[RMDB]
RNA sequence: GGGAACGACUCGAGUAGAGUCGAAAAUUUAAUGCUGUAUGCUUGUGCGAUUCAUACAACGUCAAAAAAGGCUUUUAGACCAGAAGGUGAAUUAACUAGCUACACGCUGUCGGGGAAGAAGCACGUGCCAUCAUUUGGGAUUCGUCCCAAAUGAUGGAAAAGAAACAACAACAACAAC
Reactivity to DMS in 0.01 (KOAc 150mM, MgCl2 10mM, bicine 150mM(pH8.5), 24C), signal-to-noise 3, nucleotides 027 to 126: u010u010u000a110a080u000g010c050u000g030u000a000u020g000c050u000u030g000u010g030c140g010a020u000u000c010a010u010a030c060a090a290c210g000u010c030a000a040a040a040a110a140g000g030c140u010u000u010u010a160g010a020c020c070a080g000a060a100g010g000u000g010a040a020u000u010a210a070c060u010a010g010c020u000a020c050a030c160g010c030u010g010u000c060g020g010g020g000a070a040g000a070a080g020c060a050c130g010u000g000
Reactivity to 2A3 in 0.01 (KOAc 150mM, MgCl2 10mM, bicine 150mM(pH8.5), 24C), signal-to-noise 2, nucleotides 027 to 126: u080u090u060a090a040u140g020c040u000g020u050a020u280g010c000u070u120g040u050g100c130g060a030u000u020c010a010u100a220c040a070a030c050g060u030c050a060a050a010a030a030a000g150g000c020u060u120u040u080a070g050a130c020c020a050g020a190a020g090g000u030g030a020a030u020u010a030a020c020u010a000g040c020u020a030c020a020c100g030c030u060g050u100c070g000g000g010g010a010a110g020a040a020g100c040a040c060g060u100g050
Annotation
Chemical mapping of a 177-nucleotide RNA with DMS and 2A3. The reactions ran in a buffer of 150 mM KOAc, 10 mM MgCl2 and 150 mM bicine (pH 8.5), at 24 C. The DMS profile rests on 2,648 reads. The data come from the RNA Mapping Database (RMDB), library OK2TRN. For 2A3 the reverse transcriptase was SuperScript II with manganese.